[RMDB]
RNA sequence: GGGAACGACUCGAGUAGAGUCGAAAAGAUUACGUGUCGUUGUGGAAUCGAUACUACGCACGAGAUUCUAAGGUCUCUGUAGUACGUCCGCUGGUGACGUCUUUGGAGUCACGUUCGAUAUACGAAAGCUAUCUACUAGCUUCGGCUAGUAGAUAGCAAAAGAAACAACAACAACAAC
Reactivity to 2A3 in 0.01 (KOAc 150mM, MgCl2 10mM, bicine 150mM(pH8.5), 24C), signal-to-noise 3, nucleotides 027 to 126: g080a100u070u120a010c080g010u020g020u040c030g020u020u100g010u010g000g080a060a140u160c060g020a060u030a020c010u010a000c000g030c020a010c130g010a010g000a040u090u040c120u180a170a000g080g000u010c000u000c020u030g020u000a010g000u000a000c020g000u000c000c010g000c070u070g080g060u070g010a000c000g150u030c080u130u070u160g110g000a030g000u000c020a020c050g020u080u070c010g020a020u010a000u010a130c070g070a060a040a010
Reactivity to DMS in 0.01 (KOAc 150mM, MgCl2 10mM, bicine 150mM(pH8.5), 24C), signal-to-noise 3, nucleotides 027 to 126: g000a120u000u030a040c120g000u020g000u000c030g020u000u020g000u000g020g000a020a060u010c040g000a140u010a000c010u000a010c000g010c170a060c200g000a030g000a000u000u010c190u000a110a150g030g020u010c010u000c000u000g000u000a000g040u010a000c000g000u000c000c010g000c040u040g000g000u010g010a030c000g000u020c030u000u010u040g010g010a060g010u000c020a010c020g000u020u010c010g010a020u000a050u020a050c060g000a070a050a110